[RMDB]
This 207-nucleotide RNA was probed chemically with 2A3 and DMS. It was measured as part of the RMDB library OK3TST.
RNA sequence: GGGAACGACUCGAGUAGAGUCGAAAACAUCCAACUCCACGCUUGUGGUCGUGUUGGUAGCUGAGCGUACGGAAACCAUCCGCUCUAGUGAUCGCAGAGGUAGCGGCUAAUUCAAUGGAUGGGAAAGCAUGCAGUAAUCGGGCAUGCGAAAGGAUGGCCUUUGAUUAUCCUUCGGGAUAAUCAAAGGAAAAGAAACAACAACAACAAC
Reactivity to 2A3 in 0.01 (KOAc 150mM, MgCl2 10mM, bicine 150mM(pH8.5), 24C), signal-to-noise 4, nucleotides 027 to 156: c000a030u040c010c000a040a040c070u020c040c010a020c030g110c070u130u140g040u140g130g050u080c060g060u050g030u090u090g060g030u080a070g000c030u030g020a000g010c020g010u060a050c090g040g020a040a030a040c010c000a010u020c000c020g010c020u020c030u040a050g010u030g160a150u120c040g000c040a050g030a080g290g000u190a030g020c000g000g000c020u070a110a040u140u090c130a090a060u100g010g000a010u010g010g000g060a020a000a020g000c000a010u010g010c000a010g030u180a140a100u250c090g040g060g000c000a010u000g010c000g000a030a000a010g040g000a020u030g040g010
Reactivity to DMS in 0.01 (KOAc 150mM, MgCl2 10mM, bicine 150mM(pH8.5), 24C), signal-to-noise 2, nucleotides 027 to 156: c010a120u000c010c000a050a120c040u010c000c010a030c020g000c120u000u000g040u000g010g000u000c060g040u000g060u010u010g010g000u010a070g060c030u000g000a060g000c030g000u000a170c070g010g010a100a100a140c050c000a040u000c020c030g060c030u000c050u000a060g030u000g010a070u020c020g010c040a110g010a190g050g000u000a130g050c040g000g000c040u010a010a100u000u000c040a100a080u000g010g010a040u000g020g000g020a060a080a190g010c000a020u000g000c000a130g020u000a130a170u000c190g010g030g010c000a010u000g020c000g010a040a060a050g000g020a100u000g030g000
For 2A3 the reverse transcriptase was SuperScript II with manganese.
The 2A3 profile rests on 3,452 reads.
High 2A3 reactivity points to a flexible backbone, as in loops and unpaired stretches.